Chemical mapping of a 177-nucleotide RNA with 2A3 and DMS. For DMS the reverse transcriptase was MarathonRT. The data come from the RNA Mapping Database (RMDB), library M2PK50. The reactions ran in a buffer of 150 mM KOAc, 10 mM MgCl2 and 150 mM bicine (pH 8.5), at 24 C. 2A3 adducts were read by reverse transcription with SuperScript II with manganese.
RNA sequence: GGGAACGACUCGAGUAGAGUCGAAAAGGUCCUCGCUUCGGCGAGGACCAGAGCACCACUCCUGCGGGAGUUAAGGCCAAACGGACAGCCGGGUGCAUAGCCAAUUGUUUAAGUUCGCUUAAACAAAGUACAGUAUCUGAUUCGUCAGAUACUGUACAAAAGAAACAACAACAACAAC
Reactivity to 2A3 in 0.01 (KOAc 150mM, MgCl2 10mM, bicine 150mM(pH8.5), 24C), signal-to-noise 4, nucleotides 027 to 126: g000g010u000c000c010u020c000g020c020u050u100c240g090g000c000g000a000g000g010a000c000c000a010g000a010g010c010a010c010c000a010c000u010c000c000u040g020c260g070g010g000a020g000u010u180a120a050g010g000c020c000a090a180a060c090g010g030a030c030a020g020c000c000g030g000g000u000g010c010a010u040a000g010c000c000a040a130u050u030g010u010u010u010a010a020g010u020u090c270g000c110u000u010a000a000a000c000a020a060a020
Reactivity to DMS in 0.01 (KOAc 150mM, MgCl2 10mM, bicine 150mM(pH8.5), 24C), signal-to-noise 5, nucleotides 027 to 126: g010g010u000c000c000u000c000g020c000u000u010c190g020g020c010g010a010g010g010a000c010c000a010g000a080g000c010a010c010c010a090c000u000c000c000u010g040c150g020g000g010a020g010u000u010a080a080g010g010c000c030a050a120a090c190g000g000a080c080a240g000c000c010g010g010g010u000g020c000a090u000a100g000c010c020a060a140u000u000g000u000u000u000a000a010g010u000u020c220g000c010u000u000a010a000a010c000a020a030a110